[RMDB]
RNA sequence: GGGAACGACUCGAGUAGAGUCGAAAAAGCAAAAUGGCUGAAUAGAAGCCACCAGGCCAGGUGUGGUGGCUCACACCAGUAAUCAGCACUUUGGAAGGCCGAGGUGAGCAGAUCACCUGAGGCCAGGAGUUAAAAGAUCAGACUGGUCAAUAUGGUGGAUAUAAGCGGAAUUCGUUCCGCUUAUAUCAAAAGAAACAACAACAACAAC
Reactivity to 2A3 in 0.01 (KOAc 150mM, MgCl2 10mM, bicine 150mM(pH8.5), 24C), signal-to-noise 5, nucleotides 027 to 156: a000g100c080a070a080a040a040u130g060g000c010u030g020a050a040u110a110g130a090a010g000c010c010a010c010c010a030g030g030c000c050a060g020g020u090g010u020g030g020u030g020g000c010u040c020a030c010a020c010c010a000g050u090a040a100u070c030a010g050c030a020c060u050u060u060g100g020a150a090g050g000c010c030g000a020g020g000u010g000a010g030c060a030g060a150u050c000a000c000c000u020g040a070g010g000c010c000a000g000g000a010g010u080u140a090a150a070a030g080a040u090c010a010g090a180c010u010g000g000u010c010a020a010u080a060u270g020g010u040g040
Reactivity to DMS in 0.01 (KOAc 150mM, MgCl2 10mM, bicine 150mM(pH8.5), 24C), signal-to-noise 3, nucleotides 027 to 156: a080g000c030a040a030a060a100u000g010g040c020u000g010a060a100u000a090g010a090a120g020c000c020a030c030c030a110g030g020c000c060a070g010g010u000g020u000g020g010u000g010g030c110u000c030a060c060a090c030c010a140g030u020a110a100u000c090a110g000c040a040c060u000u000u050g010g020a130a130g010g010c010c020g040a070g000g020u000g010a050g020c070a130g010a250u000c010a030c000c010u000g000a120g010g000c000c000a000g000g000a100g030u000u010a000a080a090a190g010a100u010c070a110g000a150c010u000g000g050u000c040a050a130u000a190u000g020g020u000g000
Structure probing data (2A3 and DMS) for a 207-nucleotide construct. DMS adducts were read by reverse transcription with MarathonRT. 2A3 adducts were read by reverse transcription with SuperScript II with manganese. Source: RMDB library OK3TST, as collected in RNAgym. Reactivities are rounded to 0.1 and cut off at 0 and 3. DMS (dimethyl sulfate) methylates the pairing face of unpaired adenines and cytosines.